[RMDB]
RNA sequence: GGGAACGACUCGAGUAGAGUCGAAAAUUGCUCAAAUGAGUAUUCCAAACAACAGCUUGUGAAGCAAUGAUUACUGUCAUAGUCUCUGCAUGUGGAUUGUUGUUGAGAUGCUCAUUUGAGGAAGCAACCCUAAUUACCUGUUCGCAGGUAAUUAGGGAAAAGAAACAACAACAACAAC
Reactivity to DMS in 0.01 (KOAc 150mM, MgCl2 10mM, bicine 150mM(pH8.5), 24C), signal-to-noise 4, nucleotides 027 to 126: u000u010g000c000u000c000a010a000a000u000g000a000g020u000a010u010u000c010c040a150a040a010c010a000a000c020a070g010c000u010u000g030u000g000a050a020g000c030a300a010u000g000a010u000u030a140c290u100g000u000c020a010u000a160g010u020c010u000c020u010g000c000a010u010g010u010g010g000a150u020u000g010u000u000g020u000u000g000a160g010a020u000g000c000u010c000a000u000u000u000g000a000g000g010a020a030g020c210a090a130
Reactivity to 2A3 in 0.01 (KOAc 150mM, MgCl2 10mM, bicine 150mM(pH8.5), 24C), signal-to-noise 9, nucleotides 027 to 126: u050u080g090c000u000c000a000a000a000u000g000a000g000u010a050u170u070c020c000a070a030a010c000a010a000c000a000g010c000u020u020g010u020g060a030a010g010c040a050a040u020g020a020u050u270a290c160u300g020u030c000a010u020a060g070u060c000u000c010u030g020c010a010u030g020u060g090g180a190u110u080g010u010u000g010u000u020g040a120g000a080u000g000c000u000c000a000u000u000u000g000a000g000g010a000a010g030c030a020a050

Chemical mapping of a 177-nucleotide RNA with DMS and 2A3. Source: RMDB libraries RFM100 and RFMREP, as collected in RNAgym. Values cover nucleotides 27 to 126. The reactions ran in a buffer of 150 mM KOAc, 10 mM MgCl2 and 150 mM bicine (pH 8.5), at 24 C. 2A3 adducts were read by reverse transcription with SuperScript II with manganese.